[RMDB]
RNA sequence: GGGAACGACUCGAGUAGAGUCGAAAAAGUGGUAUUGGUCCUCGAGGAAGGGUUAAGUCCCCUAAUAAUGCCUCUUCGUGGACAUGGGAUGGGGGUUAGCUUAAGCGUGAGCACAUACUUGAUGAACCCAGCAAGAUUCAGCCACUCUUUUUUUUAACGUACUACCUAUAUUCGUAUAGGUAGUACGAAAAGAAACAACAACAACAAC
Reactivity to 2A3 in 0.01 (KOAc 150mM, MgCl2 10mM, bicine 150mM(pH8.5), 24C), signal-to-noise 6, nucleotides 027 to 156: a000g050u050g050g000u100a140u200u230g070g000u010c010c010u000c010g020a030g010g020a120a140g050g020g000u060u060a060a040g180u150c010c000c000c020u030a080a050u140a110a030u190g190c000c010u020c000u030u020c030g030u060g000g010a010c020a060u030g060g000g020a080u100g030g000g000g000g050u030u070a030g010c050u050u070a060a010g030c020g080u070g060a040g060c020a010c010a160u130a050c030u050u040g020a060u080g040a060a040c030c020c010a010g030c020a030a030g010a080u100u080c020a020g000c000c000a020c020u040c040u080u030u020u020u020u020u040u090a070a030
Reactivity to DMS in 0.01 (KOAc 150mM, MgCl2 10mM, bicine 150mM(pH8.5), 24C), signal-to-noise 1, nucleotides 027 to 156: a040g000u020g010g010u010a080u010u000g020g000u000c020c000u000c010g000a060g020g010a060a060g010g000g020u000u000a050a160g010u000c030c020c010c000u000a110a290u000a040a030u000g010c010c000u010c010u000u000c080g010u010g020g010a020c010a090u000g000g010g010a130u000g000g010g020g020g020u000u000a070g030c110u000u000a040a080g010c000g030u000g000a220g060c160a090c090a090u000a060c040u000u000g010a050u000g020a040a090c020c000c010a100g020c090a070a080g000a200u000u010c010a110g040c010c000a020c030u000c010u000u000u000u000u000u000u000u000a010a250